[RMDB]
RNA sequence: GGGAACGACUCGAGUAGAGUCGAAAAAGUUAUGAGUUCGCUCAUAACUACAGCGAAAGGCGCUCGGACCCGCAGUCCGCCGAAGGCAUCCCAGCCUGUCCAAGUUGGUAUAUUUCGAUAUACCAAAUCAAGCAUACAUCUUCGGAUGUAUGCUUGAAAAAGAAACAACAACAACAAC
Reactivity to 2A3 in 0.01 (KOAc 150mM, MgCl2 10mM, bicine 150mM(pH8.5), 24C), signal-to-noise 1, nucleotides 027 to 126: a000g040u010u000a000u000g000a010g070u000u170c170g050c100u000c000a010u010a020a000c000u010a010c020a020g060c020g100a150a060a040g080g000c030g000c090u080c090g060g020a010c000c030c080g000c070a020g010u030c000c010g020c020c020g050a020a030g050g010c010a040u000c010c000c000a000g000c000c000u030g020u040c040c030a130a080g120u040u020g000g040u000a000u010a020u010u120u080c240g080a020u000a020u000a000c000c000a000a060a000
Reactivity to DMS in 0.01 (KOAc 150mM, MgCl2 10mM, bicine 150mM(pH8.5), 24C), signal-to-noise 3, nucleotides 027 to 126: a040g000u000u000a010u010g010a040g010u010u020c250g040c000u010c000a000u010a000a010c000u010a060c110a300g000c000g000a030a060a120g000g000c020g020c050u000c090g020g010a090c030c200c050g020c050a040g010u000c070c030g040c040c030g000a110a050g000g010c060a110u000c010c010c010a140g000c070c040u000g000u020c050c060a100a120g000u000u000g000g000u000a000u000a010u000u000u010c140g000a030u000a010u000a000c000c010a000a020a070